[RMDB]
The data come from the RNA Mapping Database (RMDB), library RFMREP. Structure probing data (DMS) for a 177-nucleotide construct. Conditions: 150 mM KOAc, 10 mM MgCl2 and 150 mM bicine (pH 8.5), 24 C.
RNA sequence: GGGAACGACUCGAGUAGAGUCGAAAAAAGCCCCCCUGUCCACCAGCCGCCACGACCUGAAACCAAAAUUGACCGGGAUGAAUGCCUGGCUCCCAAAUCACGGACCAAACUUCGGUUUGGUCCGUGACAACUAAUGCAAGUUCGCUUGCAUUAGUUGAAAAGAAACAACAACAACAAC
Reactivity to DMS in 0.01 (KOAc 150mM, MgCl2 10mM, bicine 150mM(pH8.5), 24C), signal-to-noise 2, nucleotides 027 to 126: a110a150g000c020c000c000c030c010c020u010g010u000c040c030a060c050c050a080g010c030c030g010c030c030a050c070g000a080c040c020u000g000a070a100a090c060c060a020a070a090a150u000u010g010a090c040c020g000g000g020a070u010g000a090a120u010g000c020c010u000g010g020c060u000c000c010c020a040a050a180u010c000a000c010g000g010a030c000c000a000a010a000c000u000u010c150g010g000u000u010u000g000g020u000c000c000g020u000g000a020